[RMDB]
Background:
Chemical mapping of a 177-nucleotide RNA with DMS and 2A3. Reactivities are given for positions 27 through 126. For DMS the reverse transcriptase was MarathonRT. 2A3 adducts were read by reverse transcription with SuperScript II with manganese.
RNA sequence: GGGAACGACUCGAGUAGAGUCGAAAAGGCGCUGAGCGGCAACUCAGCGGCGGAGCCAUCCAGCGAAGGAAGCAUCUGGUCCGUUGCUAAUCCUUCGGAUGUAAUCAUUGGCGGCGCUUCUGCGCCCUGAGGGCUCAUUAUUCGUAAUGAGCCCUCAAAAAGAAACAACAACAACAAC
Reactivity to DMS in 0.01 (KOAc 150mM, MgCl2 10mM, bicine 150mM(pH8.5), 24C), signal-to-noise 3, nucleotides 027 to 126: g000g000c020g010c000u020g000a030g010c030g020g050c250a100a300c000u000c010a030g000c010g020g000c000g000g020a090g000c080c030a070u050c040c050a160g040c040g000a030a020g000g010a070a040g000c030a010u000c020u010g000g010u050c080c130g030u030u000g000c020u000a110a180u000c000c000u020u000c000g010g000a050u000g030u030a070a160u010c160a120u020u000g010g020c060g000g050c070g010c010u000u040c130u010g030c050g000c010c020c090
Reactivity to 2A3 in 0.01 (KOAc 150mM, MgCl2 10mM, bicine 150mM(pH8.5), 24C), signal-to-noise 3, nucleotides 027 to 126: g060g000c000g000c000u000g020a000g020c050g100g030c120a060a160c010u000c010a000g000c000g010g000c000g010g020a000g010c000c000a010u000c010c020a030g040c000g080a000a000g010g000a000a020g010c000a030u010c060u140g180g080u070c090c100g010u010u000g000c000u010a190a030u040c000c000u030u000c020g000g000a030u040g030u110a120a100u180c060a030u080u050g040g000c030g000g030c010g000c000u130u060c040u170g040c000g020c000c010c020